[RMDB]
RNA sequence: GGGAACGACUCGAGUAGAGUCGAAAAUCAUCGCCGCGGCCAAGCCGAAAAACAGCAAAGACACCGGCCCUGCGCUCGAUGGCGAUGUGCCGUUCAGCCAGAAGGUUGCGGUCUCGAACUACGACAGCAGAGAGAGAUACUUCGGUAUCUCUCUCUGAAAAGAAACAACAACAACAAC
Reactivity to 2A3 in 0.01 (KOAc 150mM, MgCl2 10mM, bicine 150mM(pH8.5), 24C), signal-to-noise 4, nucleotides 027 to 126: u070c010a000u000c010g000c000c000g010c000g000g020c010c010a030a000g000c000c000g100a160a060a030a010a020c040a030g120c070a140a160a040g060a080c020a010c100c000g000g030c000c040c090u150g010c120g000c070u150c110g250a280u110g010g000c010g020a030u010g010u020g020c010c020g020u120u110c020a000g010c000c010a160g060a300a070g180g020u010u010g000c010g020g000u010c030u030c020g060a080a060c070u080a040c130g120a030c040a030g100
Reactivity to DMS in 0.01 (KOAc 150mM, MgCl2 10mM, bicine 150mM(pH8.5), 24C), signal-to-noise 5, nucleotides 027 to 126: u020c020a010u000c000g020c010c010g050c020g000g030c000c030a150a190g000c010c000g030a030a100a060a120a130c240a110g020c170a100a090a100g000a110c140a110c170c000g000g000c020c110c080u000g010c140g010c000u010c050g020a070u000g020g000c010g020a020u000g020u000g000c010c000g000u010u010c040a050g020c000c010a140g020a120a090g040g020u000u000g020c020g010g030u020c080u020c030g000a070a070c190u010a040c110g000a170c260a030g010
The record gives the reactivity of an RNA of 177 nucleotides to 2A3 and DMS.
Reactivities are given for positions 27 through 126.
For 2A3 the reverse transcriptase was SuperScript II with manganese.
Source: RMDB library OK2TST, as collected in RNAgym.